[RMDB]
RNA sequence: GGGAACGACUCGAGUAGAGUCGAAAAGUCUUGGUAACAAGGGGUCUGGAGGAAGCCGAUAGCAAAACACUGGCCUGAUGAACAAGAAGCAGAUACUAGGCUUAUUCGAUGGGUAAAAGGUCUCAAACUUUAUUUAUAUAUUCGUAUAUAAAUAAAGAAAAGAAACAACAACAACAAC
Reactivity to DMS in 0.01 (KOAc 150mM, MgCl2 10mM, bicine 150mM(pH8.5), 24C), signal-to-noise 2, nucleotides 027 to 126: g010u040c030u010u010g000g000u040a070a100c030a060a060g020g000g000g010u010c020u000g010g000a140g000g000a050a070g010c040c020g010a100u030a070g000c050a070a070a060a100c180a080c090u010g000g000c020c020u020g020a100u020g000a070a030c160a060a050g010a050a040g010c070a050g010a080u060a070c050u010a120g010g000c040u000u000a030u000u010c010g010a050u000g010g000g030u020a070a070a080a120g030g000u000c010u000c020a060a060a160
Reactivity to 2A3 in 0.01 (KOAc 150mM, MgCl2 10mM, bicine 150mM(pH8.5), 24C), signal-to-noise 2, nucleotides 027 to 126: g030u030c010u050u030g040g050u060a110a020c050a080a040g010g020g000g030u020c040u060g030g040a080g020g000a060a000g000c000c010g040a060u110a050g040c050a080a020a010a030c070a050c060u070g030g010c020c020u040g050a070u110g020a040a040c060a130a060g130a040a020g080c010a000g040a060u040a160c040u090a050g010g060c000u010u020a060u090u080c010g030a070u100g010g000g030u040a020a170a020a060g030g010u020c020u000c060a060a090a050

An RNA of 177 nucleotides, treated with DMS and 2A3 and read out base by base. DMS adducts were read by reverse transcription with MarathonRT. The RNA was probed in 150 mM KOAc, 10 mM MgCl2 and 150 mM bicine (pH 8.5) at 24 C. For 2A3 the reverse transcriptase was SuperScript II with manganese.